[RMDB]
RNA sequence: GGGAACGACUCGAGUAGAGUCGAAAACCUAUUUUACCGAUCGUUAAUAUCGAUCGUUAUGCUAAUAAUAACUCCUGUUAGCAACGUGCGCAGAUACACACAGACAUGAGAUUCAGGGAACAACAGAGAUAUAACCCAUCUUCGGAUGGGUUAUAUCAAAAGAAACAACAACAACAAC
Reactivity to DMS in 0.01 (KOAc 150mM, MgCl2 10mM, bicine 150mM(pH8.5), 24C), signal-to-noise 4, nucleotides 027 to 126: c000c010u010a100u000u010u020u000a060c210c010g010a000u000c000g010u010u000a190a090u010a090u010c000g020a020u010c010g010u000u010a050u010g020c080u000a060a030u000a030a100u010a100a100c120u010c100c070u010g010u000u000a030g010c050a080a120c160g020u010g010c060g030c070a050g010a110u010a060c080a050c100a050c050a090g000a070c110a030u010g000a100g020a080u000u000c060a030g000g010g020a040a040c060a030a030c080a090g010a170
Reactivity to 2A3 in 0.01 (KOAc 150mM, MgCl2 10mM, bicine 150mM(pH8.5), 24C), signal-to-noise 3, nucleotides 027 to 126: c000c000u020a170u020u270u080u100a050c040c000g000a000u010c010g020u020u060a090a040u090a080u270c000g000a000u000c010g000u010u060a080u050g020c010u020a060a020u080a140a030u070a180a100c060u030c040c020u050g020u030u030a030g030c040a030a080c090g040u060g030c020g000c050a010g030a080u120a070c050a000c010a010c020a000g030a060c020a040u110g030a070g000a060u090u080c030a010g000g000g060a060a020c010a010a010c000a050g110a000
Structure probing data (DMS and 2A3) for a 177-nucleotide construct. The 2A3 profile rests on 2,329 reads. For DMS, 2,614 sequencing reads were counted. The RNA was probed in 150 mM KOAc, 10 mM MgCl2 and 150 mM bicine (pH 8.5) at 24 C. DMS adducts were read by reverse transcription with MarathonRT.